[RMDB]
RNA sequence: GGGAACGACUCGAGUAGAGUCGAAAAUGAUUUUUGAGGUUGAAGAUAAUUGUCGGUCAAUGCUUUUGAUUUUUUUUCGUAUCUCAAUUGGAUUCGCCUCAGAUAAGUUAGCAAUGGAUAAAGCCAGAACAGCCAACCUAUUCGUAGGUUGGCUGUUAAAAGAAACAACAACAACAAC
Reactivity to DMS in 0.01 (KOAc 150mM, MgCl2 10mM, bicine 150mM(pH8.5), 24C), signal-to-noise 1, nucleotides 027 to 126: u020g000a090u000u010u000u040u000g010a030g000g030u000u030g030a000a010g010a300u060a010a000u010u010g000u010c210g040g010u000c030a020a020u010g020c190u030u010u000u030g000a010u050u000u010u000u000u000u020u000c230g020u010a070u000c080u010c000a030a020u000u010g000g000a300u000u000c050g010c010c020u000c020a010g000a030u000a060a150g000u010u000a070g050c110a070a000u010g020g030a090u010a080a060a100g010c030c050a130g000